[RMDB]
RNA sequence: GGGAACGACUCGAGUAGAGUCGAAAAACCCCACUCCACAGGGUCCGCGUUCCAUCCUUUCUUACCUGAUGGCCGGCAUGGUCCCAGCCUCCUUCGUGGCGCCGGCUGGGCAACAUUCCGAGGGGACGUUACGGUCUAAGUUCGCUUAGACCGUAACAAAAGAAACAACAACAACAAC
Reactivity to 2A3 in 0.01 (KOAc 150mM, MgCl2 10mM, bicine 150mM(pH8.5), 24C), signal-to-noise 2, nucleotides 027 to 126: a020c010c010c020c030a030c050u060c010c030a040c040a090g020g000g070u050c010c030g050c030g020u060u070c020c000a050u070c060c000u140u190u040c000u090u060a110c020c020u040g080a110u020g150g010c030c020g030g000c010a040u040g020g030u090c020c000c000a000g030c010c020u000c010c000u090u170c190g150u210g010g050c010g070c040c090g000g000c010u030g000g000g000c020a040a020c000a030u070u070c010c000g020a040g020g020g000g000a020c030
Reactivity to DMS in 0.01 (KOAc 150mM, MgCl2 10mM, bicine 150mM(pH8.5), 24C), signal-to-noise 2, nucleotides 027 to 126: a070c040c000c010c090a170c120u010c010c010a060c060a030g000g000g000u000c040c050g000c090g040u000u000c020c000a070u000c090c080u010u000u010c100u020u000a080c060c030u010g000a120u000g010g000c280c030g020g000c030a040u000g020g000u010c010c000c010a050g010c010c000u000c030c010u010u000c130g030u020g020g010c300g010c110c190g000g000c010u000g000g030g010c080a090a060c030a060u000u010c000c000g020a110g010g000g000g060a050c240
Chemical mapping of a 177-nucleotide RNA with 2A3 and DMS. Values are in units of 0.01, from 0 to 300, in steps of 10. For DMS the reverse transcriptase was MarathonRT. As a SHAPE reagent, 2A3 marks flexible, mostly unpaired nucleotides at the ribose 2'-OH.